This 207-nucleotide RNA was probed chemically with 2A3 and DMS. For DMS, 2,313 sequencing reads were counted. For 2A3, 623 sequencing reads were counted.

RNA sequence: GGGAACGACUCGAGUAGAGUCGAAAAAUGUGUCCCCAAAAGUUCAUGUGUUAGAAACUUAAUACCCAUUGCAACAGGGUUGAUAGGUGGGACCUUUAAAGGGUAGUUAGGCCAUGAGAGCUUUGCCCUUAUGAGUGGAUUAAUGUCGUCAUGGCAACACGCUAAUACUCUUCGGAGUAUUAGCGUGAAAAGAAACAACAACAACAAC
Reactivity to 2A3 in 0.01 (KOAc 150mM, MgCl2 10mM, bicine 150mM(pH8.5), 24C), signal-to-noise 2, nucleotides 027 to 156: a000u090g150u050g010u110c010c000c000c000a160a000a000a000g000u040u030c030a010u220g040u020g100u200u090a050g040a260a110a000c000u010u000a040a010u090a150c030c030c000a140u080u180g060c060a040a050c050a210g000g000g000u020u010g000a040u010a140g060g000u190g070g000g010a010c010c000u020u110u060a100a100a030g000g030g010u020a020g030u060u060a010g010g000c000c000a000u020g000a000g000a030g110c000u000u030u060g030c010c040c000u040u080a160u300g070a050g060u200g010g090a010u020u300a240a230u160g070u110c010g020u000c010a010u000g010g000c010a030a000
Reactivity to DMS in 0.01 (KOAc 150mM, MgCl2 10mM, bicine 150mM(pH8.5), 24C), signal-to-noise 2, nucleotides 027 to 156: a070u000g020u030g040u000c000c010c010c060a100a170a060a110g040u000u020c050a050u010g030u010g010u010u000a210g020a160a090a080c010u010u000a110a170u010a050c020c000c020a140u000u000g040c140a090a130c110a180g000g040g040u000u000g030a170u010a100g000g010u000g010g050g010a040c010c000u000u000u010a090a050a020g030g040g000u010a050g030u000u000a130g000g000c010c020a070u000g030a130g020a080g000c030u000u010u010g000c020c010c020u000u030a040u000g000a100g000u010g040g010a140u000u000a030a100u000g030u000c010g030u030c070a080u000g010g020c030a080a170